An RNA of 207 nucleotides, treated with 2A3 and DMS and read out base by base.
RNA sequence: GGGAACGACUCGAGUAGAGUCGAAAAGUUGCCGUCAAACAUCAUACCAUUAACCAUAACUGGGUAUUUAGGGUAGCAUAGUGUAAACACAUCGCGAAAUAGGGGUUCGAUGUCCUCGCGCUUGUAAAUAUACUCAACAGUAUCGUUAAGCGCAACACCUUGCUUGUAGGUUCGCCUACAAGCAAGGAAAAGAAACAACAACAACAAC
Reactivity to 2A3 in 0.01 (KOAc 150mM, MgCl2 10mM, bicine 150mM(pH8.5), 24C), signal-to-noise 3, nucleotides 027 to 156: g010u020u050g070c060c010g090u140c040a050a090a100c020a090u130c050a040u090a090c010c010a030u080u120a080a030c050c040a080u150a240a100c120u070g000g030g010u000a070u010u140u080a130g020g010g010u000a020g030c020a030u060a080g050u070g020u100a050a150a000c000a000c000a020u040c040g030c030g150a150a050a010u170a080g000g000g000g010u030u090c010g050a030u060g060u050c010c030u110c030g000c000g000c000u050u040g030u060a030a130a010u060a000u020a040c020u020c060a030a200c050a160g000u020a020u050c040g010u010u090a060a000g010c000g000c010a000a030c000a040
Reactivity to DMS in 0.01 (KOAc 150mM, MgCl2 10mM, bicine 150mM(pH8.5), 24C), signal-to-noise 2, nucleotides 027 to 156: g000u000u000g040c000c010g000u010c080a120a020a110c090a060u000c090a060u000a110c000c010a070u000u000a060a030c030c030a050u000a080a160c170u010g060g050g000u030a050u030u010u000a080g000g010g030u000a100g040c040a120u000a080g020u010g040u030a050a050a100c100a050c020a060u010c020g000c140g090a040a050a140u000a030g050g000g010g020u000u010c050g020a120u030g010u000c000c010u000c080g010c020g000c010u020u000g010u020a090a100a070u000a010u020a100c030u000c020a150a050c120a160g000u000a020u020c030g000u010u000a000a050g000c000g000c020a130a060c070a130
2A3 adducts were read by reverse transcription with SuperScript II with manganese. For DMS, 2,322 sequencing reads were counted. The reactions ran in a buffer of 150 mM KOAc, 10 mM MgCl2 and 150 mM bicine (pH 8.5), at 24 C. DMS adducts were read by reverse transcription with MarathonRT.